[RMDB]
RNA sequence: GGGAACGACUCGAGUAGAGUCGAAAAGACCGGCAUCAACACAGUCAUCUUCUAUGCGCCACAGCUCUUCAUUUCGCUGGGAACCGGGCGCAGAGCAGCUCUGCUGGCCACAAUUGUGACCGGCGUGCUUACGCCCGAGAUUCGUCUCGGGCGUAAGAAAAGAAACAACAACAACAAC
Reactivity to 2A3 in 0.01 (KOAc 150mM, MgCl2 10mM, bicine 150mM(pH8.5), 24C), signal-to-noise 2, nucleotides 027 to 126: g050a050c010c010g030g010c050a050u050c010a050a070c030a000c000a090g020u030c030a100u020c040u050u000c000u040a050u060g020c000g030c000c030a240c020a130g000c020u040c030u290u100c050a160u120u200u190c140g030c060u030g030g000g140a080a050c070c040g110g000g000c010g000c010a000g020a000g000c040a030g010c010u030c030u130g000c020u010g060g000c010c000a090c030a150a300u170u230g010u010g040a090c010c000g000g000c030g010u070g010
Reactivity to DMS in 0.01 (KOAc 150mM, MgCl2 10mM, bicine 150mM(pH8.5), 24C), signal-to-noise 3, nucleotides 027 to 126: g020a140c050c020g000g010c030a070u020c030a050a050c120a120c060a050g000u010c040a050u010c030u000u010c010u000a040u000g020c000g050c010c010a110c040a050g000c030u000c020u020u000c050a090u020u010u000c230g030c170u010g010g000g020a040a040c040c090g020g010g020c010g040c040a010g000a040g000c130a070g000c060u000c030u000g020c000u000g010g000c020c010a030c110a240a160u000u000g010u000g030a100c000c000g020g020c020g030u000g000
The data come from the RNA Mapping Database (RMDB), library OK2TRN. This 177-nucleotide RNA was probed chemically with 2A3 and DMS. The DMS profile rests on 1,943 reads. 2A3 adducts were read by reverse transcription with SuperScript II with manganese.